Chemical mapping of a 177-nucleotide RNA with DMS and 2A3.

[RMDB]
RNA sequence: GGGAACGACUCGAGUAGAGUCGAAAAUAUAGAGAGUAAUUUAAAGACUGUCACCUCUGCGUGAUUGCAAGUGAACAGUGCCCCUGUGGAAGAGCUCUAUAGUGUAAAGUGUAAAUAAAAAUAGCUACAUCUGACGAAAUUUCGAUUUCGUCAGAUGAAAAGAAACAACAACAACAAC
Reactivity to DMS in 0.01 (KOAc 150mM, MgCl2 10mM, bicine 150mM(pH8.5), 24C), signal-to-noise 2, nucleotides 027 to 126: u020a000u010a030g000a000g000a070g020u050a090a070u030u070u010a040a010a040g010a050c000u000g010u010c000a010c010c000u030c020u000g020c010g020u020g020a090u020u080g000c020a000a040g010u000g000a080a010c010a010g010u000g000c000c000c020c190u010g020u070g000g010a080a080g010a180g000c000u010c010u000a030u000a030g040u040g000u000a060a050a140g020u000g000u020a040a050a160u050a060a060a050a110a140u020a110g020c100u000a090
Reactivity to 2A3 in 0.01 (KOAc 150mM, MgCl2 10mM, bicine 150mM(pH8.5), 24C), signal-to-noise 3, nucleotides 027 to 126: u050a000u000a020g080a000g000a000g110u140a160a300u110u220u100a000a060a000g020a000c000u000g000u020c000a000c000c030u000c010u010g060c000g090u130g130a170u190u300g000c020a020a100g000u000g000a070a090c000a000g000u010g090c020c010c020c030u070g000u180g060g000a060a080g030a150g220c000u000c000u000a000u000a080g150u170g050u070a020a230a120g040u030g020u150a100a160a020u190a040a040a090a040a090u170a060g000c030u050a090
Reactivities are given for positions 27 through 126.